[RMDB]
RNA sequence: GGGAACGACUCGAGUAGAGUCGAAAAGCUUGGUGCAGGUCGGGAACUGAUUGGCUUUUCUAUUUCUAAUGAUUUCCAGGCGGCGAAAAGUUAUUGGUCAAGAUUAGAUGGAAAGUGAAUUGGAUCCUUACUCCCUCAAGUUCGCUUGAGGGAGUAAAAAAGAAACAACAACAACAAC
Reactivity to DMS in 0.01 (KOAc 150mM, MgCl2 10mM, bicine 150mM(pH8.5), 24C), signal-to-noise 2, nucleotides 027 to 126: g010c070u000u010g000g020u010g000c000a110g000g000u010c080g000g000g000a050a120c060u020g000a040u000u020g030g000c000u000u000u000u000c000u000a110u000u020u010c010u040a030a070u010g010a130u010u010u020c000c010a000g000g020c040g020g010c120g030a030a050a090a070g000u000u000a070u050u020g000g020u020c100a070a060g000a080u000u000a040g000a040u000g000g010a000a040a050g010u010g000a000a030u000u010g010g000a150u020c000c030
Reactivity to 2A3 in 0.01 (KOAc 150mM, MgCl2 10mM, bicine 150mM(pH8.5), 24C), signal-to-noise 3, nucleotides 027 to 126: g010c010u070u060g110g010u030g040c050a030g030g070u090c040g010g010g040a020a030c000u000g000a040u030u020g040g020c000u060u020u040u000c040u070a090u060u100u010c000u020a060a050u040g120a080u040u040u000c020c000a020g060g000c040g070g000c210g100a120a070a060a000g040u040u040a210u150u060g000g000u020c060a030a000g020a130u030u000a000g010a040u020g030g010a020a010a000g020u060g050a050a000u000u010g000g000a000u020c000c000